[RMDB]
RNA sequence: GGGAACGACUCGAGUAGAGUCGAAAACGGAGACUGUUCGCAGUCUCCGAAAGGAGCGCGCUUUUGCGCUAAGGCCAUACCGACAGCCGGCUCCAAAGCCGAAAAUCCGGCGGUUCGCCGCCGGAAAGAUGAACUAAUCGUUCGCGAUUAGUUCAUCAAAAGAAACAACAACAACAAC
Reactivity to 2A3 in 0.01 (KOAc 150mM, MgCl2 10mM, bicine 150mM(pH8.5), 24C), signal-to-noise 2, nucleotides 027 to 126: c000g010g000a000g000a000c000u010g030u040u090c200g010c170a000g000u000c000u020c000c010g000a010a000a000g020g000a010g010c010g000c030g010c030u130u120u190u290g020c030g000c050u030a050a080g010g000c000c010a060u130a110c010c140g050a010c010a010g040c010c000g030g010c000u030c010c030a050a070a010g070c040c010g040a070a050a010a080u000c000c010g020g000c050g010g030u000u020c220g000c000c000g020c000c000g000g010a000a000a000
Reactivity to DMS in 0.01 (KOAc 150mM, MgCl2 10mM, bicine 150mM(pH8.5), 24C), signal-to-noise 2, nucleotides 027 to 126: c020g020g000a020g010a030c000u010g000u000u030c260g000c020a000g010u000c010u020c000c000g000a000a040a080g000g000a020g040c020g010c000g010c140u000u010u010u010g020c020g030c020u010a020a040g010g010c000c060a160u010a180c130c030g000a050c100a110g000c060c010g020g040c040u000c020c100a050a120a090g020c020c030g020a040a070a050a120u000c000c000g000g000c000g020g020u000u020c200g010c010c000g000c000c000g010g000a000a010a050